Conditions: 150 mM KOAc, 10 mM MgCl2 and 150 mM bicine (pH 8.5), 24 C.
Chemical mapping of a 207-nucleotide RNA with DMS and 2A3.
It was measured as part of the RMDB library RSTRND.
[RMDB]
RNA sequence: GGGAACGACUCGAGUAGAGUCGAAAAUAUCAAGAUUUAAUGAUUAGUCAAAAUCUAAACCAAAAUCUAGCUUUUGCUAGCGUUUAGCAGCUAGUUGCUCCAUUAUAUGUUCUGGAUAAUGGAAGCAUGCCUAAGAACUUAGUGAAGUUGCUCUAGCCAUAUUAUCUUUGUUCGCAAAGAUAAUAUGAAAAGAAACAACAACAACAAC
Reactivity to DMS in 0.01 (KOAc 150mM, MgCl2 10mM, bicine 150mM(pH8.5), 24C), signal-to-noise 2, nucleotides 027 to 156: u000a110u010c110a160a070g000a080u000u000u000a080a140u010g000a300u000u000a090g020u010c090a090a080a130a200u000c020u000a060a010a080c040c030a080a050a060a070u000c020u000a030g010c030u000u000u000u000g020c020u000a070g020c080g020u010u000u000a070g050c070a140g000c010u000a060g020u000u000g020c050u000c010c000a000u010u000a030u000a070u030g000u000u000c080u010g030g000a050u000a040a050u000g010g000a050a090g010c000a060u000g020c090c040u000a110a100g010a070a040c040u010u020a090g000u010g000a080a210g010u000u000g020c010u000c040u000a040g020c260
Reactivity to 2A3 in 0.01 (KOAc 150mM, MgCl2 10mM, bicine 150mM(pH8.5), 24C), signal-to-noise 3, nucleotides 027 to 156: u200a090u140c030a040a020g030a030u020u080u200a150a070u090g050a020u040u200a040g130u110c060a080a110a010a080u000c030u060a090a060a100c050c000a070a070a000a040u020c000u010a010g010c000u050u140u220u170g000c000u000a030g060c020g130u100u200u090a040g000c040a000g020c000u000a010g010u000u030g010c000u000c000c000a000u020u000a000u000a010u100g090u100u030c050u040g010g000a010u010a010a000u000g030g010a040a010g030c000a010u070g060c000c010u070a120a050g030a040a040c000u060u080a060g010u080g140a160a010g020u010u010g000c040u020c040u040a010g040c010